[RMDB]
RNA sequence: GGGAACGACUCGAGUAGAGUCGAAAAGAUAUGGAGUGUUCAUCGGUCGACGAAGCCUAGUCGGAAACGACUAGGCAGAGACCAGAUGAGACACUCCUAAGUCAAAAGGAACGCGUUCGCGCGUUCCCUGUAGUCAUGUGUUCGCACAUGACUACAGAAAAGAAACAACAACAACAAC
Reactivity to DMS in 0.01 (KOAc 150mM, MgCl2 10mM, bicine 150mM(pH8.5), 24C), signal-to-noise 5, nucleotides 027 to 126: g000a040u010a300u010g000g000a020g010u000g020u000u010c000a020u000c010g000g010u000c000g020a190c300g000a090a120g010c000c000u000a000g000u000c010g000g000a100a110a220c000g020a020c010u000a000g000g030c010a000g000a090g010a010c000c010a090g020a020u000g010a080g000a030c000a010c000u000c000c000u000a010a070g000u010c040a090a100a140a140g000g000a010a010c000g010c010g040u010u000c250g010c040g020c000g020u000u000c000c000
Reactivity to 2A3 in 0.01 (KOAc 150mM, MgCl2 10mM, bicine 150mM(pH8.5), 24C), signal-to-noise 3, nucleotides 027 to 126: g030a020u090a060u190g010g000a000g000u000g010u030u000c000a020u010c030g010g020u010c020g100a300c040g070a150a000g000c000c000u000a000g000u000c000g030g010a060a050a040c030g000a000c000u000a000g000g000c010a000g000a000g000a000c000c020a000g010a000u000g000a050g070a000c000a000c000u000c000c000u000a040a010g050u030c050a060a050a050a140g010g010a000a010c000g010c000g040u100u160c300g000c000g000c010g180u000u000c010c000

Record summary: Structure probing data (DMS and 2A3) for a 177-nucleotide construct. For 2A3, 9,622 sequencing reads were counted. DMS adducts were read by reverse transcription with MarathonRT.